[RMDB]
RNA sequence: GGGAACGACUCGAGUAGAGUCGAAAACAAAAUUCAUACCAUGGAAACUACAGAACAAACAAUUUAGUUUCUUGCAGAAAUAAAUUGCAAGGGAAAAAUAAAGACAUGGUUAAAGACACUUCGGAGAUAUGCUUACCAGAUGCAAUUUAUGGAUGUAGUAAUAUUAGUGGUUCGCCACUAAUAUUACAAAAGAAACAACAACAACAAC
Reactivity to DMS in 0.01 (KOAc 150mM, MgCl2 10mM, bicine 150mM(pH8.5), 24C), signal-to-noise 1, nucleotides 027 to 156: c050a020a060a100a110u020u010c020a160u010a070c040c000a040u000g000g020a120a160a080c070u000a120c080a070g000a020a170c000a170a150a090c030a050a030u000u020u000a120g010u000u000u000c000u010u000g000c060a070g010a300a130a050u030a000a030a050u000u010g000c000a050a160g000g000g050a040a060a050a120a090u000a050a130a160g000a030c020a080u000g000g030u000u000a090a050a160g000a120c000a080c090u010u000c050g020g030a170g010a060u000a020u000g000c040u000u010a080c020c000a090g000a100u000g020c030a020a030u000u000u000a090u010g000g000a300u010g020u010a080
Reactivity to 2A3 in 0.01 (KOAc 150mM, MgCl2 10mM, bicine 150mM(pH8.5), 24C), signal-to-noise 5, nucleotides 027 to 156: c010a000a120a050a050u170u160c040a040u090a150c030c010a040u050g030g040a080a080a010c040u130a060c080a120g140a160a060c100a110a110a040c070a140a140u110u220u180a090g000u010u000u020c000u000u050g000c010a000g020a050a100a020u050a020a040a030u060u020g000c020a040a060g060g000g070a020a080a050a060a060u140a050a050a020g040a020c020a010u040g010g000u040u050a090a110a020g060a010c040a000c090u090u150c130g120g020a050g050a070u150a030u110g040c020u040u100a070c010c010a020g020a140u040g000c010a010a020u010u000u030a030u030g030g010a010u020g030u060a070
Chemical mapping of a 207-nucleotide RNA with DMS and 2A3. For 2A3 the reverse transcriptase was SuperScript II with manganese. For 2A3, 3,252 sequencing reads were counted. The data come from the RNA Mapping Database (RMDB), library OK3TST. For DMS, 1,542 sequencing reads were counted.